[RMDB]
RNA sequence: GGGAACGACUCGAGUAGAGUCGAAAACAAUCCGGAGAAUGGGGUGAAACUCCUCUGAAAUCCGGUGUUGCUUCAUUCCACACGAAGCACAAACAAACAGAAACACCGGGGAAUUUGUCGAUCCUUGCUGUAAAACUAUCUUCGGAUAGUUUUACAGAAAAGAAACAACAACAACAAC
Reactivity to 2A3 in 0.01 (KOAc 150mM, MgCl2 10mM, bicine 150mM(pH8.5), 24C), signal-to-noise 9, nucleotides 027 to 126: c030a010a050u040c000c010g030g010a030g030a030a120u290g010g000g000g000u030g010a020a010a000c040u060c020c000u000c000u000g020a040a030a010u000c000c000g000g000u010g000u010u060g000c000u000u010c020a110u180u100c050c030a070c010a010c120g010a010a000g030c040a010c030a020a090a000c020a020a090a010c040a020g200a060a110a010c060a030c030c050g000g000g010g060a040a100u080u070u120g050u060c040g020a040u030c010c010u010u070g030
Reactivity to DMS in 0.01 (KOAc 150mM, MgCl2 10mM, bicine 150mM(pH8.5), 24C), signal-to-noise 9, nucleotides 027 to 126: c090a220a030u010c010c000g000g000a010g020a300a050u010g000g010g000g000u000g010a100a030a240c020u010c000c000u010c000u010g000a080a300a120u000c010c000g010g020u010g010u020u020g020c020u010u000c010a100u010u020c060c080a090c150a110c160g000a010a010g000c010a050c120a110a100a100c200a080a080a070c180a100g000a110a080a060c100a050c080c040g000g000g010g000a080a130u010u020u000g010u010c020g010a130u010c060c010u000u010g020

Description
Structure probing data (2A3 and DMS) for a 177-nucleotide construct. The RNA was probed in 150 mM KOAc, 10 mM MgCl2 and 150 mM bicine (pH 8.5) at 24 C. For DMS the reverse transcriptase was MarathonRT. The data come from the RNA Mapping Database (RMDB), libraries RFM100 and RFMREP.